[RMDB]
Annotation:
Chemical mapping of a 207-nucleotide RNA with 2A3 and DMS. Values cover nucleotides 27 to 156. For DMS the reverse transcriptase was MarathonRT. The RNA was probed in 150 mM KOAc, 10 mM MgCl2 and 150 mM bicine (pH 8.5) at 24 C. The data come from the RNA Mapping Database (RMDB), library M2RFPK.

RNA sequence: GGGAACGACUCGAGUAGAGUCGAAAAGUUCAUCCCCUGAUCAAGGAUGCCCGAAACGGUGAGGCGGAAAGCAAAUUAAAUAACGUCAACCCAUCGGGACGGUUGGCCAGUUAUGAAGUGAGGAUUCAAAAGAUCGAACCGUUCGCGGUUCGAUCAACGAUAAUGCAAAGUUCGCUUUGCAUUAUCGAAAAGAAACAACAACAACAAC
Reactivity to 2A3 in 0.01 (KOAc 150mM, MgCl2 10mM, bicine 150mM(pH8.5), 24C), signal-to-noise 9, nucleotides 027 to 156: g050u070u080c020a040u020c030c000c000c010u050g030a070u050c020a030a020g060g010a060u090g040c000c000c010g050a080a080a030c090g020g010u060g030a120g040g020c030g020g040a100a030a010g090c170a090a050a080u160u180a080a090a080u130a090a010c010g000u000c010a000a010c000c000c010a040u040c020g020g000g010a010c010g040g020u020u010g020g010c020c020a040g030u070u070a100u140g070a080a050g050u050g050a040g070g050a050u070u060c060a040a020a050a090g000a000u000c000g000a000a000c010c000g000u030u040c170g010c000g070g000u000u000c000g000a000u000c000a000a000
Reactivity to DMS in 0.01 (KOAc 150mM, MgCl2 10mM, bicine 150mM(pH8.5), 24C), signal-to-noise 3, nucleotides 027 to 156: g000u000u010c000a080u000c000c000c000c020u000g030a070u000c050a120a060g020g000a110u000g010c140c010c010g020a090a140a120c100g020g020u000g000a090g040g000c000g020g000a080a080a120g000c160a080a070a170u000u000a070a100a080u000a040a090c030g010u000c020a050a050c020c000c030a200u000c040g000g000g010a100c090g010g010u000u000g020g000c030c050a080g000u000u000a060u020g000a060a090g010u010g010a120g000g000a150u000u000c040a050a060a090a140g000a020u000c000g000a000a030c000c010g000u000u010c300g070c010g020g000u000u000c020g000a020u000c000a030a060